[RMDB]
Structure probing data (2A3 and DMS) for a 177-nucleotide construct. Conditions: 150 mM KOAc, 10 mM MgCl2 and 150 mM bicine (pH 8.5), 24 C. The DMS profile rests on 2,317 reads.
RNA sequence: GGGAACGACUCGAGUAGAGUCGAAAAGGUUUCCUCAAAGGGAAGCCGAAGAUAUCUUGAUGGAUUUGUUAGAGAUUUCUUCUAGAAGCGCUCUCCAUCAGGCGAAGUUAUCGAGCGAAGAGCAAAGGCACGCUCAUAAUUUCGAUUAUGAGCGUGCAAAAGAAACAACAACAACAAC
Reactivity to 2A3 in 0.01 (KOAc 150mM, MgCl2 10mM, bicine 150mM(pH8.5), 24C), signal-to-noise 3, nucleotides 027 to 126: g020g020u040u000u000c020c000u120c160a120a090a090g040g010g000a000a000g010c000c010g010a030a000g060a010u070a110u010c020u010u070g000a060u020g060g080a120u170u160u150g080u120u200a070g020a050g010a140u110u070u000c070u040u000c050u220a110g020a170a040g040c050g010c020u010c000u000c010c040a000u000c000a000g050g000c050g020a050a040g090u130u110a090u100c060g020a000g070c050g060a150a030g050a080g150c050a090a070a050g170
Reactivity to DMS in 0.01 (KOAc 150mM, MgCl2 10mM, bicine 150mM(pH8.5), 24C), signal-to-noise 2, nucleotides 027 to 126: g010g010u020u000u010c000c000u040c120a050a090a170g000g030g000a000a030g000c000c010g000a120a070g030a090u020a030u000c020u000u000g030a000u000g000g000a140u000u040u010g030u030u000a060g010a110g010a130u040u010u000c010u000u000c050u010a040g000a020a070g010c290g000c160u000c030u000c020c010a020u000c010a030g030g040c150g030a070a050g000u000u030a050u030c090g000a210g010c070g000a040a070g010a060g020c030a060a140a040g010